Conditions: 150 mM KOAc, 10 mM MgCl2 and 150 mM bicine (pH 8.5), 24 C.
An RNA of 177 nucleotides, treated with DMS and 2A3 and read out base by base.

RNA sequence: GGGAACGACUCGAGUAGAGUCGAAAAAAAAUGGCUGUGAGGAACUUCUGUCUUCACGCAGAAAGCGUCUAGCCAUGGCGUUAGUAUGAGUGUCGUGCAGCCUCCAGCCUCGAAAAACCGUCAGAAAGAGUAUAUAACCUUUCGAGGUUAUAUACUCAAAAGAAACAACAACAACAAC
Reactivity to DMS in 0.01 (KOAc 150mM, MgCl2 10mM, bicine 150mM(pH8.5), 24C), signal-to-noise 4, nucleotides 027 to 126: a050a010a050a080u010g000g010c000u000g020u010g010a020g020g010a120a020c060u010u030c000u000g000u000c010u010u000c010a010c010g000c010a020g010a100a160a300g000c000g000u000c000u010a090g000c210c280a110u010g000g000c010g010u000u020a040g000u000a040u000g000a040g010u000g000u000c010g000u000g000c000a010g000c010c000u000c010c010a020g000c010c010u000c090g000a050a050a040a070a120c050c040g010u010c100a120g010a070a060a100
Reactivity to 2A3 in 0.01 (KOAc 150mM, MgCl2 10mM, bicine 150mM(pH8.5), 24C), signal-to-noise 3, nucleotides 027 to 126: a000a000a010a050u060g000g010c040u060g110u230g140a000g030g020a030a070c060u270u080c000u120g000u020c010u000u000c010a000c000g000c000a010g000a000a000a010g000c000g010u000c020u040a050g070c060c030a060u120g010g000c010g000u010u000a000g020u000a010u010g020a010g020u010g020u020c030g060u170g080c000a000g000c000c000u000c000c000a010g000c000c010u000c000g000a000a000a000a020a010c030c010g100u120c030a030g180a120a170a000
The DMS profile rests on 3,616 reads.
For 2A3, 3,422 sequencing reads were counted.
DMS adducts were read by reverse transcription with MarathonRT.